[RMDB]
RNA sequence: GGGAACGACUCGAGUAGAGUCGAAAAAUUAAUAACGUCUACAAAGCCUUCGAUACAAAAGAAGUGCAUACUGGAGUUAAUCUCUCUAUUAAACGCGGUGAAAAUAUUACUGUGCUUGGUGGUAGUGCGUUAAGGGCAUGUUCGCAUGCCCUUAACGAAAAGAAACAACAACAACAAC
Reactivity to DMS in 0.01 (KOAc 150mM, MgCl2 10mM, bicine 150mM(pH8.5), 24C), signal-to-noise 1, nucleotides 027 to 126: a060u010u000a130a040u000a070a100c080g000u000c000u000a050c100a180a190a120g000c000c000u000u000c000g010a220u000a120c300a110a040a270a100g010a040a020g040u000g020c020a020u000a240c300u000g000g000a110g000u010u000a000a150u000c020u000c070u020c040u040a010u000u000a020a040a100c100g010c050g000g000u010g000a040a060a070a080u010a070u010u000a060c150u000g020u000g050c040u000u000g000g000u000g000g000u000a060g020u000g000